[RMDB]
RNA sequence: GGGAACGACUCGAGUAGAGUCGAAAAAUGAAGCGUCAGCUAUUGUCGCUCCGUGAACACGCAGAGUCGGGGAACCGUUUUCAAGCCCGGGAGGCGCCAUUUAAUCUCUACAAUGUUCUUCACUAAAUAACAUUAUCUUCUUCGGAAGAUAAUGUUAAAAAGAAACAACAACAACAAC
Reactivity to 2A3 in 0.01 (KOAc 150mM, MgCl2 10mM, bicine 150mM(pH8.5), 24C), signal-to-noise 9, nucleotides 027 to 126: a010u140g040a070a010g010c010g030u040c040a030g050c150u140a120u160u190g070u060c020g000c010u000c010c010g070u090g050a060a020c060a010c090g020c050a040g020a040g120u070c030g000g000g000g040a040a060c020c020g020u030u020u070u120c070a090a030g010c000c000c010g010g030g010a030g020g020c020g010c010c000a020u040u040u060a060a050u040c020u000c010u030a040c060a080a120u110g030u050u020c010u080u110c040a050c110u130a070a070a200
Reactivity to DMS in 0.01 (KOAc 150mM, MgCl2 10mM, bicine 150mM(pH8.5), 24C), signal-to-noise 5, nucleotides 027 to 126: a050u040g010a080a060g000c030g010u000c030a050g000c160u020a070u030u020g020u010c030g010c000u000c030c010g020u000g000a050a070c090a080c100g000c070a080g000a050g010u010c030g000g000g000g000a090a120c070c040g010u010u010u020u000c080a080a100g010c030c030c010g030g000g010a060g010g010c040g010c030c030a040u020u000u010a070a100u040c010u000c020u000a040c050a080a110u010g010u010u010c040u000u020c080a070c110u010a030a070a100